[RMDB]
Chemical mapping of a 177-nucleotide RNA with 2A3 and DMS. The reactions ran in a buffer of 150 mM KOAc, 10 mM MgCl2 and 150 mM bicine (pH 8.5), at 24 C. 2A3 adducts were read by reverse transcription with SuperScript II with manganese. DMS (dimethyl sulfate) methylates the pairing face of unpaired adenines and cytosines. The 2A3 profile rests on 2,348 reads.
RNA sequence: GGGAACGACUCGAGUAGAGUCGAAAAAGCAAAUAUCGUAUGUUGAACCGUAGACUAGACUUUGCCAGUUUAGCAGACAAGUUCAAAACUCUCAACCUCAUGGUUAAGGGUGAGACCAAGCCCAAGAGAUCGUAUACGAUUUCGAUCGUAUACGAUCAAAAGAAACAACAACAACAAC
Reactivity to 2A3 in 0.01 (KOAc 150mM, MgCl2 10mM, bicine 150mM(pH8.5), 24C), signal-to-noise 3, nucleotides 027 to 126: a000g120c100a080a080a020u230a080u190c120g070u130a110u200g170u080u060g000a020a020c030c030g030u040a010g060a110c010u000a030g010a010c010u100u060u080g160c040c000a010g000u000u020u020a020g000c020a010g020a120c060a080a010g000u050u000c000a030a030a000a100c020u040c000u000c020a010a050c020c000u150c130a180u300g050g000u040u020a040a000g030g000g000u020g020a030g000a020c040c060a050a010g010c040c000c000a040a020g080a020
Reactivity to DMS in 0.01 (KOAc 150mM, MgCl2 10mM, bicine 150mM(pH8.5), 24C), signal-to-noise 5, nucleotides 027 to 126: a080g020c140a100a070a050u010a080u010c130g010u000a110u000g020u000u000g010a050a030c010c060g010u000a100g010a120c010u000a030g010a020c010u000u010u010g030c240c230a080g000u000u000u000a020g020c220a090g000a050c160a110a110g010u010u000c020a020a040a090a030c030u000c000u000c020a010a020c010c010u020c220a120u020g010g010u000u000a050a010g010g000g000u000g000a100g000a070c150c100a090a110g010c000c000c010a070a070g000a250